[RMDB]
RNA sequence: GGGAACGACUCGAGUAGAGUCGAAAAUCGAAGAAUGUUGCCCCUGUGGAGCAGAUGACGACGUCGGACUCAUUGAUGAAGUAGAACGCGCCCGCGGUGCACAUGCCCUGAACGGCGCACACCACGGCUACGUGGCCACUUUCGAGUGGCCACGUAGAAAAGAAACAACAACAACAAC
Reactivity to DMS in 0.01 (KOAc 150mM, MgCl2 10mM, bicine 150mM(pH8.5), 24C), signal-to-noise 2, nucleotides 027 to 126: u090c030g000a120a020g000a010a030u000g000u000u040g020c080c000c040c080u020g040u030g020g000a070g060c050a080g000a010u040g020a090c120g000a070c120g010u000c100g000g000a060c080u030c020a070u050u040g040a060u020g000a060a110g010u040a030g010a030a020c110g000c130g000c000c040c010g000c210g070g000u000g000c050a140c160a110u000g010c030c040c000u000g000a120a300c200g000g000c070g020c090a040c060a020c020c010a140c040g000g000
Reactivity to 2A3 in 0.01 (KOAc 150mM, MgCl2 10mM, bicine 150mM(pH8.5), 24C), signal-to-noise 3, nucleotides 027 to 126: u070c030g040a080a030g030a130a100u150g130u080u060g070c000c000c000c000u050g000u060g010g050a020g010c020a040g050a080u120g040a040c100g050a040c040g040u010c000g090g000a090c030u030c090a140u110u200g040a080u100g030a080a040g060u090a040g020a170a050c040g000c000g030c000c050c000g030c080g020g000u070g010c040a030c010a140u290g020c000c000c000u050g030a100a030c040g020g000c030g040c000a000c010a030c020c000a040c000g030g000

An RNA of 177 nucleotides, treated with DMS and 2A3 and read out base by base. The reactions ran in a buffer of 150 mM KOAc, 10 mM MgCl2 and 150 mM bicine (pH 8.5), at 24 C. The 2A3 profile rests on 1,177 reads. In probing experiments dimethyl sulfate is read out at A N1 and C N3, which are open when not base-paired. It was measured as part of the RMDB library OK1LIB. For DMS the reverse transcriptase was MarathonRT. 2A3 adducts were read by reverse transcription with SuperScript II with manganese.